[RMDB]
RNA sequence: GGGAACGACUCGAGUAGAGUCGAAAAGGCACCCUCCUCUGGAACACUGUUUGGAAUAUGGCGAUCAUAGCACAUUGCUAUGAAUUUCGUGAUUUUAGAGUUGCCGCUUUCAAGGGAGAUGAUUCCGCAAAGAGAUCCUAUUCGUAGGAUCUCUUUGAAAAGAAACAACAACAACAAC
Reactivity to DMS in 0.01 (KOAc 150mM, MgCl2 10mM, bicine 150mM(pH8.5), 24C), signal-to-noise 9, nucleotides 027 to 126: g000g020c090a090c080c040c020u000c030c010u000c050u010g010g010a030a040c050a110c050u000g010u000u010u010g010g010a050a050u010a080u010g020g010c010g010a090u000c000a010u000a000g010c010a170c290a140u010u010g010c000u000a010u000g010a030a110u000u000u000c050g020u000g000a080u000u000u000u000a090g010a060g010u010u000g010c050c030g010c170u000u000u000c040a030a060g000g000g010a030g010a110u000g000a180u000u000c010c020g010
Reactivity to 2A3 in 0.01 (KOAc 150mM, MgCl2 10mM, bicine 150mM(pH8.5), 24C), signal-to-noise 7, nucleotides 027 to 126: g050g000c040a070c030c010c010u020c000c010u040c040u040g010g020a020a010c030a010c030u050g070u190u080u080g050g040a040a040u120a110u170g080g000c010g010a010u020c000a000u000a000g040c010a050c050a200u120u300g000c010u000a000u010g030a040a050u050u080u060c050g010u070g130a170u010u060u070u140a060g010a000g020u040u050g070c040c010g000c040u020u040u030c020a030a030g030g010g000a050g010a030u080g010a030u070u020c010c010g010
Record summary
The data come from the RNA Mapping Database (RMDB), library OK2TRN. Structure probing data (DMS and 2A3) for a 177-nucleotide construct. 2A3 adducts were read by reverse transcription with SuperScript II with manganese. The reactions ran in a buffer of 150 mM KOAc, 10 mM MgCl2 and 150 mM bicine (pH 8.5), at 24 C.